RNA sequence: GGGAACGACUCGAGUAGAGUCGAAAAUUAUUGAAGUAGGCUACCAGACAGAUGUUGACGGCAAAAUUACUACAGAUUACAAGAAGUGGAAGGACAUUCUGAGGUUGCUAGAGCUUCUAAACAUUAAAUGCUCCUUUAUUGCAUGUGCAGACUGUUCCGUUGCCUGUCUAUUCGUAGACAGGCAACGAAAAGAAACAACAACAACAAC
Reactivity to 2A3 in 0.01 (KOAc 150mM, MgCl2 10mM, bicine 150mM(pH8.5), 24C), signal-to-noise 1, nucleotides 027 to 156: u130u060a110u170u110g040a000a000g000u210a050g020g040c000u010a000c010c000a040g130a090c040a010g030a000u050g040u050u000g090a060c010g000g030c050a070a070a000a150u100u050a010c030u010a030c020a060g150a190u110u060a030c040a160a020g070a090a000g070u030g160g020a050a080g110g010a020c040a040u300u000c080u030g020a020g050g000u000u080g030c020u120a070g010a050g050c000u010u000c000u030a050a090a000c050a040u000u300a030a090a000u060g060c040u100c000c000u050u260u180a170u140u100g000c030a050u000g010u050g090c020a010g010a050c010u020g000u080u000c030